Conditions: 150 mM KOAc, 10 mM MgCl2 and 150 mM bicine (pH 8.5), 24 C. An RNA of 177 nucleotides, treated with DMS and read out base by base. For DMS, 1,676 sequencing reads were counted. It was measured as part of the RMDB library OK1LIB.
[RMDB]
RNA sequence: GGGAACGACUCGAGUAGAGUCGAAAAGUGCAGAGUGAAAUACAUAGGUGCGGCGCCAAUGUGGCGUAACGACCCGGUACUCCGCGCAGUCGCGCUGUAAACGUUCUGUGUUGGCGUUCAGGCCUCAAUACGUGGCCAUGUUCGCAUGGCCACGUAUAAAAGAAACAACAACAACAAC
Reactivity to DMS in 0.01 (KOAc 150mM, MgCl2 10mM, bicine 150mM(pH8.5), 24C), signal-to-noise 1, nucleotides 027 to 126: g020u020g020c000a020g020a000g010u000g000a060a030a030u000a020c080a090u020a120g070g030u020g010c020g030g000c000g010c000c060a110a050u020g010u080g000g000c050g010u030a020a050c080g000a070c000c020c000g020g020u000a030c020u000c040c130g000c030g000c040a040g000u020c080g000c030g000c040u020g060u010a030a100a200c010g000u000u000c040u000g000u020g000u000u000g000g000c100g030u000u000c110a130g010g000c020c040u000c040a100